Source information: Chemical mapping of a 177-nucleotide RNA with 2A3 and DMS. The 2A3 profile rests on 1,451 reads. For DMS, 3,492 sequencing reads were counted. Source: RMDB library RFM100, as collected in RNAgym.
[RMDB]
RNA sequence: GGGAACGACUCGAGUAGAGUCGAAAACGGGGCGCCGCCUCCGGCGCUCGCAGGCCACGGGUGAAGAAGAAAGUCCGUACCUGCUCGGCCCGGAGUGAGGAGGAGCCCCCGGCAGAGGAGGUGACCCUACCUGGAAUACGUUCGCGUAUUCCAGGUAAAAAGAAACAACAACAACAAC
Reactivity to 2A3 in 0.01 (KOAc 150mM, MgCl2 10mM, bicine 150mM(pH8.5), 24C), signal-to-noise 3, nucleotides 027 to 126: c020g000g000g000g020c020g020c010c030g020c000c010u000c010c000g020g010c150g000c030u000c010g000c000a000g010g010c110c080a010c000g000g020g010u100g060a110a110g060a130a030g060a110a300a000g050u010c000c010g000u010a020c000c000u000g030c020u050c080g060g000c000c000c010g010g000a010g000u250g050a060g020g060a060g000g020a050g000c020c000c000c000c020g060g050c050a020g010a030g090g030a040g060g000u070g040a050c000c000c000
Reactivity to DMS in 0.01 (KOAc 150mM, MgCl2 10mM, bicine 150mM(pH8.5), 24C), signal-to-noise 3, nucleotides 027 to 126: c220g000g000g020g020c020g000c000c010g010c010c000u010c000c000g020g000c200g010c000u000c300g000c000a010g020g000c150c100a010c000g010g020g010u000g000a120a060g040a300a170g030a170a100a260g010u000c000c020g010u010a300c020c020u000g000c000u020c220g020g010c050c000c010g000g000a020g010u040g020a060g020g030a110g030g000a100g000c010c000c000c000c000g000g010c090a080g000a100g000g010a070g020g000u010g010a200c000c000c030